[RMDB]
RNA sequence: GGGAACGACUCGAGUAGAGUCGAAAAGAAAGAAAGGAGGUGGGCCUGACAUCCCUGAGUGUAUGUGGUGAACCUGAACUUGCCCUGGGUUUCCUCAUAUCCAUUCAGGAGUGUCAGCUGCCUCUAAAAAUCGGAUAUGGUUCGCCAUAUCCGAUUUAAAAGAAACAACAACAACAAC
Reactivity to DMS in 0.01 (KOAc 150mM, MgCl2 10mM, bicine 150mM(pH8.5), 24C), signal-to-noise 2, nucleotides 027 to 126: g020a130a090a090g010a090a110a150g000g000a010g030g010u000g000g000g000c170c040u000g010a000c000a010u010c030c000c000u000g010a030g020u010g000u000a000u000g020u000g000g000u010g010a010a020c000c010u010g010a090a090c070u010u020g010c090c100c100u010g000g000g000u020u010u000c020c020u030c010a020u000a010u000c070c000a010u000u000c000a030g000g010a060g020u010g000u000c020a010g010c000u010g000c000c010u010c000u000a010a050
Reactivity to 2A3 in 0.01 (KOAc 150mM, MgCl2 10mM, bicine 150mM(pH8.5), 24C), signal-to-noise 5, nucleotides 027 to 126: g140a020a090a010g120a040a080a040g050g010a010g010g020u110g020g050g030c030c020u000g000a000c010a010u080c010c000c000u000g000a000g000u010g010u000a000u000g020u010g000g020u090g030a000a000c010c010u040g060a110a110c070u150u210g050c010c010c040u030g010g000g010u040u120u030c010c010u050c010a010u010a010u030c040c000a000u000u000c000a000g010g010a020g000u000g000u000c000a000g000c000u000g000c000c000u000c000u010a000a000

Structure probing data (DMS and 2A3) for a 177-nucleotide construct. The reactions ran in a buffer of 150 mM KOAc, 10 mM MgCl2 and 150 mM bicine (pH 8.5), at 24 C. For DMS the reverse transcriptase was MarathonRT. Reactivities are given for positions 27 through 126.